[RMDB]
RNA sequence: GGGAACGACUCGAGUAGAGUCGAAAAUGUUCCGGAUUCGUCCGGAACAAAAUAUGGCACCGGUACACGUCGAUACAAUGCCACGGAGAUGGACCGGGUGAAAAACCACUUAGUUCGCUAAGUGGAACUUCCUAGUCAGCUUCGGCUGACUAGGAAGAAAAGAAACAACAACAACAAC
Reactivity to DMS in 0.01 (KOAc 150mM, MgCl2 10mM, bicine 150mM(pH8.5), 24C), signal-to-noise 1, nucleotides 027 to 126: u000g010u000u000c000c020g000g000a000u000u010c250g020u000c010c000g000g010a000a000c000a000a080a060a120u050a050u000g000g010c050a120c020c030g000g020u000a020c030a100c060g010u000c060g000a170u020a060c160a120a060u020g010c060c040a060c060g000g010a300g000a070u010g050g000a060c000c050g030g000g000u000g000a030a030a060a070a100c000c000a040c000u000u000a000g020u000u000c180g010c000u000a020a000g010u000g000g000a010a040